[RMDB]
RNA sequence: GGGAACGACUCGAGUAGAGUCGAAAAGAGCUGAAGUUCGCUUCAGCUCAAAACAAAACUGUACACGCAGUACAGAAAAACAAAAACAAAAAUGCGUAAUAAAAAGAUAGCAGUUCGCUGCUAUCAACCUAGUCCAUUACUUCGGUAAUGGACUAGGAAAAGAAACAACAACAACAAC
Reactivity to 2A3 in 0.01 (KOAc 150mM, MgCl2 10mM, bicine 150mM(pH8.5), 24C), signal-to-noise 1, nucleotides 027 to 126: g000a000g000c000u000g000a010a000g000u000u060c090g050c110u010u000c000a000g000c000u000c000a000a000a000a000c000a000a010a000a030c030u010g000u010a000c010a000c010g080c000a010g040u000a000c000a010g040a080a040a030a000a000c020a010a070a000a050a010c080a000a080a040a080a060u060g020c040g040u070a070a080u100a130a160a030a020a000g000a000u000a000g000c010a000g000u020u080c180g010c120u000g020c000u000a000u000c000a000a000
Structure probing data (2A3) for a 177-nucleotide construct. Reactivities are given for positions 27 through 126. The data come from the RNA Mapping Database (RMDB), library M2PK50. 2A3 adducts were read by reverse transcription with SuperScript II with manganese.